Overview:
The record gives the reactivity of an RNA of 177 nucleotides to 2A3 and DMS. For 2A3 the reverse transcriptase was SuperScript II with manganese. Values are in units of 0.01, from 0 to 300, in steps of 10. The reactions ran in a buffer of 150 mM KOAc, 10 mM MgCl2 and 150 mM bicine (pH 8.5), at 24 C. The 2A3 profile rests on 5,095 reads. Values cover nucleotides 27 to 126.
RNA sequence: GGGAACGACUCGAGUAGAGUCGAAAACAGCCGUGGAAGGUCGGGAUGCCGGUCAGCUUGUUGCCGUCCGAGGUCAGGUACUCGCCGUUGCUGAUCUGCUCGGCCUGCUGCAACAGGUAGAAGAUCGCAUUACGUCGGAGUUCGCUCCGACGUAAUGAAAAGAAACAACAACAACAAC
Reactivity to 2A3 in 0.01 (KOAc 150mM, MgCl2 10mM, bicine 150mM(pH8.5), 24C), signal-to-noise 6, nucleotides 027 to 126: c020a010g050c030c010g030u060g040g060a120a020g010g020u030c020g020g050g040a090u180g050c030c010g020g010u030c020a010g010c020u050u070g100u120u100g060c020c010g040u060c020c020g060a050g010g050u150c070a080g020g050u110a110c030u030c030g020c040c020g080u090u080g050c020u000g010a030u000c020u040g030c030u000c010g000g000c000c010u030g000c020u060g000c010a070a070c020a050g040g040u070a040g030a190a010g040a070u110c050g030
Reactivity to DMS in 0.01 (KOAc 150mM, MgCl2 10mM, bicine 150mM(pH8.5), 24C), signal-to-noise 4, nucleotides 027 to 126: c080a120g010c060c040g000u020g020g010a080a050g000g000u000c020g020g020g000a080u020g020c100c050g000g010u000c030a060g010c010u000u010g010u020u020g010c100c040g020u020c060c030g010a060g000g000u020c040a060g010g010u020a070c100u020c090g020c110c050g000u020u040g000c020u000g000a010u000c040u000g030c000u000c000g010g010c300c080u000g010c050u030g000c100a080a060c060a030g000g020u020a060g000a120a080g010a080u010c070g010